An RNA of 207 nucleotides, treated with 2A3 and DMS and read out base by base. It was measured as part of the RMDB library OK3TST. Values cover nucleotides 27 to 156. For DMS, 8,550 sequencing reads were counted. For DMS the reverse transcriptase was MarathonRT. Conditions: 150 mM KOAc, 10 mM MgCl2 and 150 mM bicine (pH 8.5), 24 C.

RNA sequence: GGGAACGACUCGAGUAGAGUCGAAAACUAGGCAGAUCUCGAAAAUCGAUGCGCUCUGGAUCCGGAUGAUUCUUUAUAUAGUAUUGGCUCAGUACAUACUGCUGAAUCAAAAGCUGAAAGUAGUAUUGGUGGCGCGGAUUGACGAAAGCGGGCAGCGUCACCUUGAUCAGUUCGCUGAUCAAGGUGAAAAAGAAACAACAACAACAAC
Reactivity to 2A3 in 0.01 (KOAc 150mM, MgCl2 10mM, bicine 150mM(pH8.5), 24C), signal-to-noise 5, nucleotides 027 to 156: c020u040a030g070g020c030a010g020a110u030c030u040c070g080a080a060a040a080u120c060g070a110u070g030c050g010c050u020c020u040g050g030a050u000c010c030g110g030a070u070g030a030u130u040c030u020u160u030a180u050a040u100a130g020u030a070u040u080g000g020c010u000c060a020g000u050a030c030a080u100a060c030u030g000c000u010g040a030a010u040c020a030a050a030a060g040c030u050g030a050a040a020g030u080a010g020u020a060u070u080g050g030u040g010g000c000g000c000g040g030a070u050u070g030a030c040g010a030a030a010g040c040g000g020g010c020a010g010c010g040
Reactivity to DMS in 0.01 (KOAc 150mM, MgCl2 10mM, bicine 150mM(pH8.5), 24C), signal-to-noise 3, nucleotides 027 to 156: c020u010a080g010g010c030a100g010a030u000c040u010c050g010a090a070a090a090u000c030g020a120u000g020c010g030c060u000c030u010g010g010a090u000c020c020g000g000a190u010g010a120u000u000c040u000u000u000a130u010a140u000a110g010u000a130u000u000g020g030c040u000c030a070g040u000a080c070a110u000a070c100u000g050c050u000g000a040a060u000c030a050a050a060a140g020c060u000g020a110a080a100g020u000a040g030u000a090u000u000g020g020u020g010g000c020g020c020g030g010a140u000u010g010a120c060g000a090a080a090g010c040g010g010g010c010a060g010c030g010